[RMDB]
RNA sequence: GGGAACGACUCGAGUAGAGUCGAAAAGCUGAGCUGGCUGGCAGCGCUGUUAAGGGAAUCCUGCCAGGAGGCGGCGUGGGCGCCAGAGAGGGUAAACGCGCUAACGGCAAGCGCGGCAAUAACGCUAGCCCAUUUAAAUAUUCGUAUUUAAAUGGGCAAAAGAAACAACAACAACAAC
Reactivity to 2A3 in 0.01 (KOAc 150mM, MgCl2 10mM, bicine 150mM(pH8.5), 24C), signal-to-noise 9, nucleotides 027 to 126: g020c010u030g010a010g030c000u010g070g020c000u020g020g030c030a010g010c020g000c090u160g070u150u160a150a100g080g030g050a050a040u090c010c010u030g070c030c010a050g030g070a080g030g040c040g040g000c040g010u130g040g050g030c020g000c030c010a040g040a030g010a040g090g020g010u120a110a120a020c010g010c010g000c020u050a100a030c020g070g000c040a020a010g000c030g010c000g020g000c010a030a080u130a150a030c080g020c130u060a040
Reactivity to DMS in 0.01 (KOAc 150mM, MgCl2 10mM, bicine 150mM(pH8.5), 24C), signal-to-noise 6, nucleotides 027 to 126: g020c010u010g010a050g000c010u000g000g030c010u020g010g020c300a030g000c070g030c010u020g020u000u020a100a090g010g010g000a150a060u020c020c010u010g020c050c030a070g000g000a270g020g020c030g000g010c010g010u020g010g010g010c130g000c030c010a100g000a140g010a110g010g020g000u010a040a080a060c020g000c000g010c000u000a080a220c060g000g000c020a020a020g000c010g010c000g010g000c060a080a090u040a070a060c090g020c080u030a130
Overview
Structure probing data (2A3 and DMS) for a 177-nucleotide construct. The RNA was probed in 150 mM KOAc, 10 mM MgCl2 and 150 mM bicine (pH 8.5) at 24 C.